Chemical mapping of a 207-nucleotide RNA with 2A3 and DMS.
The RNA was probed in 150 mM KOAc, 10 mM MgCl2 and 150 mM bicine (pH 8.5) at 24 C.
2A3 adducts were read by reverse transcription with SuperScript II with manganese.
Source: RMDB library OK3TST, as collected in RNAgym.
Reactivities are given for positions 27 through 156.
Values are in units of 0.01, from 0 to 300, in steps of 10.
RNA sequence: GGGAACGACUCGAGUAGAGUCGAAAACAUGGAGUGCUCGGGCCUCGGAGCCUCCUACAACAACAACAACUUUCGAGGCCAUUAAUGGGCGAAAGCCCUAGGAGUCGUGGCGGCGUGCACGCUCCGUAUGACUUAAUGUAUUACACGCCGGCUACAAAGUGACGGAUAUAUUCGUAUAUCCGUCACUAAAAGAAACAACAACAACAAC
Reactivity to 2A3 in 0.01 (KOAc 150mM, MgCl2 10mM, bicine 150mM(pH8.5), 24C), signal-to-noise 2, nucleotides 027 to 156: c030a030u100g000g000a000g000u250g010c000u010c010g000g000g010c010c000u000c010g000g000a000g000c030c010u010c010c000u050a030c080a190a000c000a020a000c000a010a010c000a030a070c020u080u300u210c070g000a000g000g000c000c000a000u000u010a000a010u020g000g040g000c040g030a130a010a020g000c000c000c000u000a030g000g000a010g050u300c040g000u030g020g030c020g010g000c010g000u000g000c000a000c000g000c010u000c000c000g000u070a090u220g070a000c030u060u070a060a010u210g100u180a100u080u130a060c010a000c020g010c040c010g000g000c030u050a060c070a070a230
Reactivity to DMS in 0.01 (KOAc 150mM, MgCl2 10mM, bicine 150mM(pH8.5), 24C), signal-to-noise 1, nucleotides 027 to 156: c030a160u000g020g000a070g010u000g010c030u000c060g040g040g020c000c000u020c010g030g000a050g040c000c000u000c000c010u000a070c070a060a060c050a090a090c120a130a080c070a060a070c140u020u000u010c040g010a100g000g010c020c000a100u000u000a040a070u000g010g020g030c040g040a120a110a270g010c000c000c000u000a010g000g000a080g010u020c040g010u000g000g020c040g000g000c020g040u010g000c010a070c000g000c030u000c000c010g050u000a020u000g040a110c130u000u010a040a180u020g020u000a080u020u000a110c020a030c030g020c020c000g060g000c000u000a100c060a020a110